Chemical mapping of a 207-nucleotide RNA with DMS and 2A3. The reactions ran in a buffer of 150 mM KOAc, 10 mM MgCl2 and 150 mM bicine (pH 8.5), at 24 C. The DMS profile rests on 7,131 reads. For DMS the reverse transcriptase was MarathonRT. For 2A3 the reverse transcriptase was SuperScript II with manganese. The 2A3 profile rests on 3,018 reads.
[RMDB]
RNA sequence: GGGAACGACUCGAGUAGAGUCGAAAAGCACACAAUCACGGCUCACUGCAGCCUUGACCAACUACAGGUGCGUAGCACCACAGCCAAGUUUUUGUAUAGAUGGGGUCUCGCUUUGUUACCCAGGCUGUGACAAGAGGAGCCUCCCACGUGGUGUGGAUGAGAACAAUAGAUUCGUCUAUUGUUCUCAAAAAGAAACAACAACAACAAC
Reactivity to DMS in 0.01 (KOAc 150mM, MgCl2 10mM, bicine 150mM(pH8.5), 24C), signal-to-noise 3, nucleotides 027 to 156: g030c000a030c030a040c070a120a120u010c080a080c060g010g000c020u000c020a110c090u000g010c020a040g010c090c020u000u010g030a140c040c020a090a110c050u010a050c070a070g040g010u000g010c030g040u010a140g020c020a060c010c020a050c100a050g000c020c030a070a150g030u000u000u000u000u000g020u000a170u000a090g000a110u010g010g030g030g010u000c010u000c030g000c050u000u010u020g010u000u000a070c020c020c060a220g030g040c080u010g000u000g020a130c080a050a080g000a110g010g010a080g010c010c010u000c010c010c020a070c140g010u000g010g000u000g010u000g010g010a290
Reactivity to 2A3 in 0.01 (KOAc 150mM, MgCl2 10mM, bicine 150mM(pH8.5), 24C), signal-to-noise 4, nucleotides 027 to 156: g020c020a010c000a010c020a050a090u070c030a040c110g020g000c010u020c030a260c180u230g040c120a010g000c000c000u010u030g020a050c040c060a070a090c060u150a070c060a080g000g070u020g020c030g030u040a020g000c020a010c010c010a020c020a020g070c040c060a090a100g020u050u040u060u120u200g160u120a170u080a130g110a080u100g010g020g000g030u020c020u000c010g060c040u070u070u090g020u040u030a030c020c040c090a060g090g030c090u040g010u030g030a020c020a040a000g040a060g160g010a000g000c010c010u090c010c000c000a040c050g040u060g000g030u050g020u030g050g050a070